[RMDB]
This 177-nucleotide RNA was probed chemically with DMS and 2A3.
The RNA was probed in 150 mM KOAc, 10 mM MgCl2 and 150 mM bicine (pH 8.5) at 24 C.

RNA sequence: GGGAACGACUCGAGUAGAGUCGAAAACUCGUAGAAGGCGUCGAGAUCGAGACAACGUCGUGACAGCGGUCCGUCGGCCACGUGUUGUCGCCCAUCGGGUACGCGAAGUCCGCGACCGACGGCCCGACGUAGUUGCGGUGUUCGCACCGCAACUACGAAAAGAAACAACAACAACAAC
Reactivity to DMS in 0.01 (KOAc 150mM, MgCl2 10mM, bicine 150mM(pH8.5), 24C), signal-to-noise 1, nucleotides 027 to 126: c030u020c040g000u020a130g020a100a030g000g010c040g030u000c020g010a140g040a130u010c090g000a180g010a050c090a080a010c060g030u010c030g020u000g010a050c070a120g000c030g010g010u000c040c010g020u000c040g020g010c010c010a020c010g000u010g040u000u030g000u000c080g010c040c010c060a230u000c130g000g000g010u020a110c090g000c000g010a090a150g000u010c070c010g010c020g020a030c020c000g000a050c030g000g000c020c000c020g000a100
Reactivity to 2A3 in 0.01 (KOAc 150mM, MgCl2 10mM, bicine 150mM(pH8.5), 24C), signal-to-noise 2, nucleotides 027 to 126: c000u010c010g030u070a050g030a300a080g100g060c030g010u090c050g030a050g020a230u150c080g030a040g030a060c030a040a000c040g040u040c000g030u030g040a040c040a080g090c040g000g000u060c010c030g020u040c020g060g000c040c000a040c020g040u110g100u090u100g140u080c060g050c020c010c000a090u170c100g000g080g000u150a040c050g000c020g060a040a030g080u000c070c000g030c010g020a070c010c000g040a010c000g030g000c000c010c000g060a050